[RMDB]
RNA sequence: GGGAACGACUCGAGUAGAGUCGAAAAGGGACGCCUUUAGAAGAAGAGGCUAGGUGGUAUUCCGGUGUGGGAUACUUGGUAAUAUGUAAUGCUAAUUGCAUAAGAUUGUAGGACGGAAUUUACAGUCAAAACGGUCCUGCGUUCGCGCAGGACCGAAGGAGAAUGUAAGGUUCGCCUUACAUUCUCCAAAAGAAACAACAACAACAAC
Reactivity to DMS in 0.01 (KOAc 150mM, MgCl2 10mM, bicine 150mM(pH8.5), 24C), signal-to-noise 2, nucleotides 027 to 156: g010g020g020a090c100g030c040c040u010u000u000a130g000a140a240g010a230a100g000a120g010g000c030u000a060g010g020u000g000g000u000a050u010u000c000c010g020g010u000g050u010g000g060g010a100u000a020c010u000u010g000g030u000a100a100u000a060u000g010u000a050a110u010g000c070u020a070a130u000u000g000c000a110u050a040a170g000a050u000u000g030u000a080g010g010a080c060g010g010a060a300u010u010u020a020c050a030g070u000c020a060a030a060a220c010g060g030u000c000c000u000g040c040g020u000u010c280g040c000g000c000a000g030g000a000c000c020g000a000a030
Reactivity to 2A3 in 0.01 (KOAc 150mM, MgCl2 10mM, bicine 150mM(pH8.5), 24C), signal-to-noise 4, nucleotides 027 to 156: g020g010g010a020c040g030c020c010u100u050u080a180g030a250a020g050a030a020g010a020g020g000c050u030a020g030g050u030g020g010u020a050u030u020c020c020g070g070u200g020u170g060g000g000a010u020a060c010u030u100g060g040u080a070a080u040a060u110g010u040a020a040u040g070c080u090a130a060u090u060g000c010a010u010a090a040g020a060u020u070g040u040a020g020g060a020c050g020g030a020a010u150u080u040a050c020a010g050u040c020a020a040a100a030c020g000g000u000c000c010u010g010c010g000u020u050c220g000c010g000c070a000g000g000a000c000c000g000a000a010
This 207-nucleotide RNA was probed chemically with DMS and 2A3. The data come from the RNA Mapping Database (RMDB), library M2RFPK. For 2A3, 3,778 sequencing reads were counted. For DMS the reverse transcriptase was MarathonRT. 2A3 adducts were read by reverse transcription with SuperScript II with manganese.